Chemical mapping of a 177-nucleotide RNA with 2A3 and DMS.
DMS adducts were read by reverse transcription with MarathonRT.
The RNA was probed in 150 mM KOAc, 10 mM MgCl2 and 150 mM bicine (pH 8.5) at 24 C.
[RMDB]
RNA sequence: GGGAACGACUCGAGUAGAGUCGAAAACACAGCCAUCCUCUAGUAAGUUUGUAAGACGUCUGAUGACGUGUGGGAAAACACUAGAAAUAUUAACUUGCUGUAAAGCAUCCUACUGCCAGCGGAAUCACUCACAAAAUGUGUUCGCACAUUUUGUGAGAAAAGAAACAACAACAACAAC
Reactivity to 2A3 in 0.01 (KOAc 150mM, MgCl2 10mM, bicine 150mM(pH8.5), 24C), signal-to-noise 7, nucleotides 027 to 126: c080a000c010a010g040c010c010a060u050c000c020u000c000u000a010g010u050a190a160g000u010u040u040g120u110a060a020g090a050c010g000u010c050u170g230a210u300g010a040c010g030u090g110u120g080g100g090a000a040a000a000c030a010c000u010a010g060a020a100a000u170a080u080u120a080a090c070u050u130g010c000u020g060u150a060a080a010g040c010a050u070c010c030u040a090c010u030g030c020c000a030g000c050g050g040a030a040u100c020a030
Reactivity to DMS in 0.01 (KOAc 150mM, MgCl2 10mM, bicine 150mM(pH8.5), 24C), signal-to-noise 3, nucleotides 027 to 126: c110a050c090a020g000c030c110a080u000c090c040u000c010u000a020g000u010a120a060g010u000u000u000g040u000a270a100g020a010c020g000u000c000u030g010a200u020g010a010c010g040u010g020u020g040g010g000a130a020a010a040c020a040c030u000a040g000a040a090a060u020a080u040u000a030a100c140u020u030g020c020u000g000u010a060a060a070g000c090a090u000c040c020u010a070c100u000g010c050c030a080g010c050g000g020a090a090u000c100a170